[RMDB]
RNA sequence: GGGAACGACUCGAGUAGAGUCGAAAACACACUCUGCUAGGUGUGCGUAACAUGUAGUUUCAUACUGUAAAUCCAGUAGUUUAAUUUUAUGUUUGUGUGUUUAUUUUAAAUCAGUAUGUAAGCAGCAAAACAUCUCUCACUUCGGUGAGAGAUGUUUAAAAGAAACAACAACAACAAC
Reactivity to 2A3 in 0.01 (KOAc 150mM, MgCl2 10mM, bicine 150mM(pH8.5), 24C), signal-to-noise 2, nucleotides 027 to 126: c000a010c000a000c010u080c030u050g030c030u250a090g000g300u000g030u020g020c010g000u020a090a010c000a240u160g040u190a060g010u000u060u140c060a050u010a000c030u090g050u080a000a000a200u050c020c030a100g000u000a010g000u100u020u080a070a090u040u180u020u210a050u110g120u030u090u000g030u000g030u000g060u000u000u000a080u030u110u000u110a000a030a060u090c050a000g010u020a040u090g050u170a040a020g260c120a040g030c070a060
Reactivity to DMS in 0.01 (KOAc 150mM, MgCl2 10mM, bicine 150mM(pH8.5), 24C), signal-to-noise 2, nucleotides 027 to 126: c040a060c000a020c000u000c010u020g020c090u020a190g000g000u030g030u000g000c150g000u040a090a070c140a040u000g020u010a060g000u000u020u000c100a050u000a040c050u000g000u000a060a110a040u020c170c050a030g060u060a060g040u040u000u000a060a000u020u020u000u010a030u020g000u030u000u000g000u000g020u000g000u000u000u000a010u010u000u000u040a010a070a090u040c060a010g030u010a020u020g020u020a060a110g000c030a030g020c200a070
Structure probing data (2A3 and DMS) for a 177-nucleotide construct. The data come from the RNA Mapping Database (RMDB), library OK1LIB. The RNA was probed in 150 mM KOAc, 10 mM MgCl2 and 150 mM bicine (pH 8.5) at 24 C.